Structure probing data (2A3 and DMS) for a 177-nucleotide construct.
RNA sequence: GGGAACGACUCGAGUAGAGUCGAAAAGAUAUGGAAUACGGUUUGUAUUUCAGCGAAGAACUCGGAAACGAGGGAGCUGAAUAUAAUUUGUAUUCCUAAGUCAAACUAGGUACUUCGGUACCUAGAACACUAUGUAGAAGUUCGCUUCUACAUAGUGAAAAGAAACAACAACAACAAC
Reactivity to 2A3 in 0.01 (KOAc 150mM, MgCl2 10mM, bicine 150mM(pH8.5), 24C), signal-to-noise 8, nucleotides 027 to 126: g030a020u100a040u160g000g000a010a000u000a000c010g030g020u000u040u040g030u030a070u040u300u110c000a000g000c010g170a300a050g010a070a020c010u010c000g010g040a080a070a050c020g000a010g030g000g010a020g000c000u000g010a010a000u020a000u000a020a020u040u090u190g000u010a000u000u000c000c000u010a140a020g050u020c040a050a080a140c010u000a000g000g000u000a000c000u030u070c300g090g000u000a000c000c000u000a000g000a010a000
Reactivity to DMS in 0.01 (KOAc 150mM, MgCl2 10mM, bicine 150mM(pH8.5), 24C), signal-to-noise 9, nucleotides 027 to 126: g010a030u000a300u010g000g000a020a000u000a000c000g000g000u000u000u000g010u000a000u010u010u010c000a000g010c000g000a090a130g010a120a220c000u000c000g000g000a130a120a190c010g010a010g000g000g000a070g020c000u000g000a010a010u000a010u000a010a000u000u000u010g020u000a010u010u000c000c000u000a040a130g010u000c030a090a120a260c010u000a000g000g010u000a000c000u000u010c180g030g010u000a000c000c000u000a010g000a070a200
2A3 is a SHAPE reagent: it acylates the 2'-hydroxyl of flexible nucleotides of all four kinds. The reactions ran in a buffer of 150 mM KOAc, 10 mM MgCl2 and 150 mM bicine (pH 8.5), at 24 C.